[RMDB]
RNA sequence: GGGAACGACUCGAGUAGAGUCGAAAAGGCUCCAGCGUCUUAGUCUGGUCAUGAGUGCGCAACUCUAUGGAAGGCUUCUGGGAGGUCAAGGAAGAUGAAACCUAAAUAUGCCCAUUGGAUGUAGGAGCAAGGAGGGCAUUAGAGACAUUGAUGAAAACAUACGUCGGGUAUUCGUACCCGACGUAUGAAAAGAAACAACAACAACAAC
Reactivity to 2A3 in 0.01 (KOAc 150mM, MgCl2 10mM, bicine 150mM(pH8.5), 24C), signal-to-noise 3, nucleotides 027 to 156: g050g030c050u020c020c010a030g020c050g080u050c040u070u050a030g020u030c020u040g100g020u100c040a030u080g030a010g020u090g010c050g010c070a050a070c010u000c040u110a050u080g040g000a020a080g060g000c020u090u000c070u060g040g010g030a060g040g000u050c050a020a030g030g040a030a030g050a030u100g030a070a010a010c000c000u030a060a090a060u210a060u110g010c010c000c000a060u060u090g050g020a010u040g010u120a030g000g040a020g030c000a020a000g070g000a010g020g010g000c000a000u010u060a020g030a000g000a020c040a010u030u140g050a030u150g040a120a130a000a000
Reactivity to DMS in 0.01 (KOAc 150mM, MgCl2 10mM, bicine 150mM(pH8.5), 24C), signal-to-noise 1, nucleotides 027 to 156: g000g030c050u000c050c010a130g010c070g060u000c050u020u000a070g010u040c040u010g050g000u000c100a140u010g010a080g030u010g010c300g000c050a180a090c040u000c010u000a100u000g020g000a100a090g010g020c020u000u010c050u000g010g020g030a150g010g000u000c000a070a100g010g000a080a140g000a170u000g010a110a100a060c010c000u010a060a050a090u010a040u000g020c020c000c020a160u000u000g000g000a100u030g040u010a000g020g010a080g000c000a060a090g010g020a120g020g000g030c040a030u010u010a030g050a200g000a080c010a070u010u010g000a130u020g030a140a140a100a190
Overview: This 207-nucleotide RNA was probed chemically with 2A3 and DMS. It was measured as part of the RMDB library OK3TST. For DMS, 1,928 sequencing reads were counted. In probing experiments dimethyl sulfate is read out at A N1 and C N3, which are open when not base-paired. High 2A3 reactivity points to a flexible backbone, as in loops and unpaired stretches. DMS adducts were read by reverse transcription with MarathonRT.